[RMDB]
RNA sequence: GGGAACGACUCGAGUAGAGUCGAAAACAAGGCCAUGAAUCAGAUGGAGGCUUUUGGCCUGAGGCUGUCUUCUGGACCCACCCCUUCCCCAUCUGGUUAACUCAGGCCACAGCUCUGCCUCCGAUGCAACCUACUUACAUUUCGAUGUAAGUAGGUUAAAAGAAACAACAACAACAAC
Reactivity to 2A3 in 0.01 (KOAc 150mM, MgCl2 10mM, bicine 150mM(pH8.5), 24C), signal-to-noise 5, nucleotides 027 to 126: c040a030a040g040g010c010c010a100u140g090a060a070u120c040a040g090a200u190g050g020a010g010g000c000u070u060u090u120g010g010c000c000u000g000a010g030g010c080u050g050u070c040u120u030c060u120g120g060a150c000c010c020a080c020c000c000c030u010u040c010c010c010c000a020u040c040u050g050g000u050u070a040a040c000u000c010a000g010g010c030c000a020c010a010g030c020u040c030u130g010c000c000u000c000c000g000a010u040g020c020
Reactivity to DMS in 0.01 (KOAc 150mM, MgCl2 10mM, bicine 150mM(pH8.5), 24C), signal-to-noise 9, nucleotides 027 to 126: c120a100a100g010g010c020c060a080u000g010a090a070u000c070a060g010a130u010g010g010a040g010g000c030u000u000u000u000g000g010c000c000u000g000a020g010g010c130u000g010u000c050u000u000c140u000g000g000a100c020c020c050a190c040c010c010c040u010u000c010c000c000c080a100u000c070u000g010g000u000u000a070a120c040u000c010a010g000g010c000c010a030c300a060g010c160u010c120u010g010c010c000u000c000c010g010a060u010g000c250